This 177-nucleotide RNA was probed chemically with 2A3 and DMS. The RNA was probed in 150 mM KOAc, 10 mM MgCl2 and 150 mM bicine (pH 8.5) at 24 C.
RNA sequence: GGGAACGACUCGAGUAGAGUCGAAAAUGAGAAUUAAAUGGGUCUUCUGCUACGGCUUCAAUCUCAGGAAGUAAAUCUGCAAUAGCUCGAAUCGUUGUGGAUUUACCAGUUCCACGAUCACCCAUAAUACAUAUCAAACAUUCGUGUUUGAUAUGUAAAAAGAAACAACAACAACAAC
Reactivity to 2A3 in 0.01 (KOAc 150mM, MgCl2 10mM, bicine 150mM(pH8.5), 24C), signal-to-noise 9, nucleotides 027 to 126: u040g010a010g030a040a130u220u140a150a140a110u090g020g030g000u030c030u120u040c050u130g030c030u040a040c090g070g000c010u090u130c070a070a070u010c010u000c010a010g020g020a040a010g000u010a020a020a020u020c010u010g000c010a020a020u030a140g030c060u040c230g180a150a120u100c060g030u010u010g000u010g020g000a000u010u000u000a010c000c000a020g050u040u000c020c020a050c040g030a060u100c040a040c020c010c010a020u100a070a020
Reactivity to DMS in 0.01 (KOAc 150mM, MgCl2 10mM, bicine 150mM(pH8.5), 24C), signal-to-noise 9, nucleotides 027 to 126: u000g000a070g000a080a110u000u000a050a130a070u000g000g000g020u000c080u000u010c070u010g010c070u000a080c120g020g010c020u000u000c090a060a080u010c020u000c040a060g000g010a100a180g000u010a010a010a010u000c010u000g000c000a020a030u000a080g020c120u000c220g010a070a100u010c070g020u000u000g020u000g000g000a020u000u000u000a010c030c140a140g010u000u000c010c000a080c100g000a070u000c110a060c010c010c010a050u000a100a150